[RMDB]
RNA sequence: GGGAACGACUCGAGUAGAGUCGAAAACUCUGUAAACGUUAUUUCUAAAUCUGGUACAACUACAGAACCAGCAGUUGCAUUUAGAUUGUUCAAACAAUUAGUUGAAGAAAGAUACGGUAAAGAAGAAACGUUAUUCUGAUUUCGAUCAGAAUAACGUAAAAGAAACAACAACAACAAC
Reactivity to 2A3 in 0.01 (KOAc 150mM, MgCl2 10mM, bicine 150mM(pH8.5), 24C), signal-to-noise 8, nucleotides 027 to 126: c020u020c020u050g170u230a030a070a060c020g000u000u020a030u010u040u000c020u050a030a040a070u020c000u020g020g000u030a020c010a030a020c030u050a050c020a110g180a300a180c070c020a020g030c040a020g030u030u050g000c010a010u050u040u100a060g020a030u020u050g040u110u150c060a070a100a070c010a060a130u200u120a130g060u030u080g050a040a020g010a000a040a000g080a030u160a100c010g010g070u140a080a060a020g080a060a010g050a030a210
Reactivity to DMS in 0.01 (KOAc 150mM, MgCl2 10mM, bicine 150mM(pH8.5), 24C), signal-to-noise 5, nucleotides 027 to 126: c010u010c000u020g010u020a080a130a070c030g000u000u010a160u010u000u010c000u000a030a010a010u010c010u000g010g020u010a050c010a000a020c040u000a040c050a100g010a120a130c300c200a060g000c050a010g000u000u000g010c040a020u000u030u050a020g010a030u010u000g010u020u030c110a050a030a050c060a100a100u030u030a120g010u010u000g000a090a030g010a030a030a020g020a100u060a010c000g010g000u020a070a100a090g020a060a100g010a070a090